Conditions: 150 mM KOAc, 10 mM MgCl2 and 150 mM bicine (pH 8.5), 24 C. An RNA of 177 nucleotides, treated with 2A3 and DMS and read out base by base. For DMS the reverse transcriptase was MarathonRT. Source: RMDB library OK2TST, as collected in RNAgym.

RNA sequence: GGGAACGACUCGAGUAGAGUCGAAAACGGAAUUGUGCCGGCGAGCAGAACACCGGCUGUUUUGCCGAGCGGCCAGCGGACCUUGACCGCCAGGUUCAACGUCAGAAGCAGAUACGUGAAGUACACCUGAUUACAACUAGUUCGCUAGUUGUAAUCAAAAAGAAACAACAACAACAAC
Reactivity to 2A3 in 0.01 (KOAc 150mM, MgCl2 10mM, bicine 150mM(pH8.5), 24C), signal-to-noise 6, nucleotides 027 to 126: c020g030g040a130a090u140u090g070u160g030c000c010g060g060c010g020a050g010c020a020g020a060a010c020a030c040c060g200g000c070u010g020u000u070u030u050g000c000c010g010a070g150c020g020g000c000c010a010g010c030g040g000a070c010c020u040u090g050a060c020c000g020c060c040a050g030g000u080u080c030a030a020c030g020u030c020a030g040a150a020g010c030a010g020a090u070a070c030g030u070g110a100a020g040u050a020c030a040c060c030
Reactivity to DMS in 0.01 (KOAc 150mM, MgCl2 10mM, bicine 150mM(pH8.5), 24C), signal-to-noise 9, nucleotides 027 to 126: c050g000g010a110a110u010u000g020u010g030c010c010g000g000c020g010a140g020c040a030g000a040a040c030a060c090c200g020g020c120u010g010u000u000u000u000g010c010c010g000a140g020c030g000g010c010c040a100g010c070g000g000a050c040c080u000u010g010a070c020c020g010c070c120a080g000g000u010u000c040a050a070c130g000u000c030a070g010a080a100g010c040a080g010a090u000a050c050g000u000g000a080a090g010u000a070c140a110c070c070